[RMDB]
RNA sequence: GGGAACGACUCGAGUAGAGUCGAAAAACUAGGAGCGCACAUCUCUCUAACACUGUACGACAGUCUGUCUCUCUAGCACGCUUGUUCAACGAGAGAGAGAGAGCGUUGGAACAAGUGUGCAACGAAACAUACAAGCUUCAUUCGUGAAGCUUGUAUGAAAAGAAACAACAACAACAAC
Reactivity to 2A3 in 0.01 (KOAc 150mM, MgCl2 10mM, bicine 150mM(pH8.5), 24C), signal-to-noise 9, nucleotides 027 to 126: a000c070u080a050g020g040a030g020c040g040c050a020c020a170u040c020u000c000u000c000u030a070a020c020a010c060u080g080u160a030c030g040a020c050a010g020u010c020u060g040u010c020u010c000u010c020u100a020g000c000a000c000g000c000u000u000g000u000u010c000a010a000c010g000a010g000a010g000a010g010a010g010a000g010a210g000c010g000u000u020g140g010a010a000c000a000a010g000u000g000u000g000c000a000a010c040g040a030a040a000
Reactivity to DMS in 0.01 (KOAc 150mM, MgCl2 10mM, bicine 150mM(pH8.5), 24C), signal-to-noise 8, nucleotides 027 to 126: a090c100u010a070g010g000a070g000c090g010c100a070c080a090u010c020u000c030u010c040u000a090a110c130a070c040u000g000u000a050c080g010a270c290a030g010u000c030u000g010u000c030u000c010u000c050u000a200g010c010a020c010g010c020u000u000g010u000u000c010a020a010c020g010a090g010a130g000a090g000a060g000a050g010a080g000c020g010u000u000g020g010a010a010c010a010a020g020u000g010u000g010c010a030a040c200g000a060a060a140